RNA sequence: GGGAACGACUCGAGUAGAGUCGAAAAAGACUUGUAUUCGUACAAGUCUACAGAAAUUACGCUAGCACACGAUCACACCUAGCGUUCUCAAUAACGAUCGAACAACGUGUCAAUUCGUUGACACGAAACCGUCAUAAGCAUUCGUGCUUAUGACGGUAAAAGAAACAACAACAACAAC
Reactivity to 2A3 in 0.01 (KOAc 150mM, MgCl2 10mM, bicine 150mM(pH8.5), 24C), signal-to-noise 5, nucleotides 027 to 126: a000g010a010c000u000u000g010u020a010u030u100c240g020u010a000c000a010a000g000u020c000u020a000c000a020g240a020a220a020u160u080a020c010g000c000u020a010g030c100a040c010a020c140g020a040u040c010a040c020a030c080c000u000a000g000c010g020u020u000c040u010c020a060a150u200a140a080c100g010a020u040c020g050a080a040c040a050a050c040g000u000g000u000c000a010a020u050u060c160g090u060u020g000a010c000a000c010g010a060a000
Reactivity to DMS in 0.01 (KOAc 150mM, MgCl2 10mM, bicine 150mM(pH8.5), 24C), signal-to-noise 3, nucleotides 027 to 126: a040g000a020c000u010u010g000u000a000u000u020c120g010u000a000c010a000a020g000u000c000u000a050c220a070g010a060a060a020u010u020a000c000g010c030u000a000g000c160a090c140a070c030g050a010u000c010a180c240a070c210c000u000a010g000c020g000u000u000c020u030c150a120a150u020a070a050c170g010a000u000c010g000a100a100c300a060a150c000g080u010g000u000c000a020a020u010u030c140g020u000u000g000a000c000a000c020g020a000a050